[RMDB]
RNA sequence: GGGAACGACUCGAGUAGAGUCGAAAAGAGGGCAGUGACAGUGUGCAGGGUGGGUAUGCGUUGUAGCGGUGUGUUGACUGCGCAUGAACUGGCUACAGCAGUCCUCGGGAACUGAUGUCAUUCCUGAGGGUCGGGCGGCCUUCGGGUUGCUUGGCCCAAAAGAAACAACAACAACAAC
Reactivity to 2A3 in 0.01 (KOAc 150mM, MgCl2 10mM, bicine 150mM(pH8.5), 24C), signal-to-noise 9, nucleotides 027 to 126: g130a050g000g030g020c060a040g040u040g090a060c030a060g070u050g030u090g160c050a040g020g030g070u210g030g020g010u080a070u130g060c060g030u030u040g020u040a020g020c030g010g030u040g000u010g010u060u110g060a080c060u070g010c020g000c020a020u040g030a060a030c040u070g120g000c010u030a010c010a020g000c000a010g040u050c010c020u030c020g000g000g010a040a020c040u060g030a090u100g080u110c030a040u040u020c010c000u010g020a050
Reactivity to DMS in 0.01 (KOAc 150mM, MgCl2 10mM, bicine 150mM(pH8.5), 24C), signal-to-noise 9, nucleotides 027 to 126: g010a110g000g000g000c070a080g010u010g000a080c090a080g010u010g020u020g010c050a090g000g000g010u030g000g000g000u020a040u020g010c070g010u010u000g010u010a040g010c040g000g020u000g010u010g010u010u010g010a080c080u010g010c040g010c030a050u010g010a090a070c060u000g000g010c020u010a030c050a060g010c050a080g000u010c020c020u010c050g010g000g000a060a050c090u000g000a090u010g010u010c080a210u000u000c010c010u000g000a300